Source: RMDB library OK2TST, as collected in RNAgym. Chemical mapping of a 177-nucleotide RNA with DMS and 2A3. For 2A3 the reverse transcriptase was SuperScript II with manganese. Reactivities are given for positions 27 through 126. The reactions ran in a buffer of 150 mM KOAc, 10 mM MgCl2 and 150 mM bicine (pH 8.5), at 24 C. For 2A3, 1,356 sequencing reads were counted. The DMS profile rests on 1,110 reads.
RNA sequence: GGGAACGACUCGAGUAGAGUCGAAAAGGAUUUCUUACAUGCAUGCACACAGACUCACAAGGCCUGGGAGAGACAUGUGACUUCACAUCUUCCUUUCCUUACCUCACGCCUUGCGUGGCCGUGGAGGAGGGUGCUAAACAUUCGUGUUUAGCACCCUAAAAGAAACAACAACAACAAC
Reactivity to DMS in 0.01 (KOAc 150mM, MgCl2 10mM, bicine 150mM(pH8.5), 24C), signal-to-noise 2, nucleotides 027 to 126: g010g000a120u000u000u000c060u000u000a170c140a000u000g020c060a100u010g000c080a060c060a090c020a080g020a050c020u000c040a100c120a080a240g000g010c020c110u000g000g020g020a050g000a080g000a060c260a030u020g030u010g000a210c130u010u000c050a040c080a030u000c130u020u010c050c030u000u000u000c050c010u020u010a230c090c020u000c060a020c150g000c010c040u010u000g000c170g010u010g030g020c150c090g020u000g000g030a100g000g050
Reactivity to 2A3 in 0.01 (KOAc 150mM, MgCl2 10mM, bicine 150mM(pH8.5), 24C), signal-to-noise 2, nucleotides 027 to 126: g050g000a050u050u090u010c020u020u100a020c020a060u140g070c010a030u110g000c050a010c020a010c000a010g030a050c020u010c020a050c000a050a040g000g040c000c020u030g030g010g010a070g010a020g040a020c010a050u040g040u030g050a100c060u170u180c090a060c010a090u070c030u060u090c000c000u030u050u050c020c010u080u050a090c000c000u050c020a040c020g000c000c010u080u100g100c080g090u070g040g000c080c050g010u040g050g040a020g020g030